[RMDB]
RNA sequence: GGGAACGACUCGAGUAGAGUCGAAAAAAUUGCUCUUGGGAACGAAGUCCACCCGCAUGCGCGGCCAAGACCCGGCGACCAUGACCGAGGCCGAAAAGCUCGACCACUGGAAGUACAUGCUGGACACCAAAAACAUCUCUUUCGAGAGAUGUUUUUGAAAAGAAACAACAACAACAAC
Reactivity to 2A3 in 0.01 (KOAc 150mM, MgCl2 10mM, bicine 150mM(pH8.5), 24C), signal-to-noise 2, nucleotides 027 to 126: a010a010u120u140g030c020u020c000u060u060g060g000g000a080a070c060g030a150a030g040u000c020c010a050c020c020c000g020c010a040u190g110c100g020c040g080g000c010c010a060a020g040a020c020c010c020g060g000c020g030a020c030c030a030u090g000a010c050c020g010a040g030g070c010c030g050a150a110a010a020g040c020u020c050g030a040c020c010a030c110u020g000g030a060a000g040u040a050c020a050u100g030c030u030g020g000a020c020a060c090
Reactivity to DMS in 0.01 (KOAc 150mM, MgCl2 10mM, bicine 150mM(pH8.5), 24C), signal-to-noise 4, nucleotides 027 to 126: a060a060u010u010g010c030u000c050u000u010g010g010g000a110a080c100g000a090a110g010u000c020c020a120c140c060c060g020c040a040u000g020c080g010c050g000g010c030c010a040a080g010a080c120c030c060g000g000c020g010a140c050c050a060u020g000a090c060c030g020a070g000g020c020c040g010a050a050a100a220g010c050u000c030g000a070c020c010a050c140u000g000g010a050a110g020u000a070c090a040u000g010c080u000g020g010a040c060a120c200

This 177-nucleotide RNA was probed chemically with 2A3 and DMS. DMS adducts were read by reverse transcription with MarathonRT. The reactions ran in a buffer of 150 mM KOAc, 10 mM MgCl2 and 150 mM bicine (pH 8.5), at 24 C. The data come from the RNA Mapping Database (RMDB), library OK2TRN.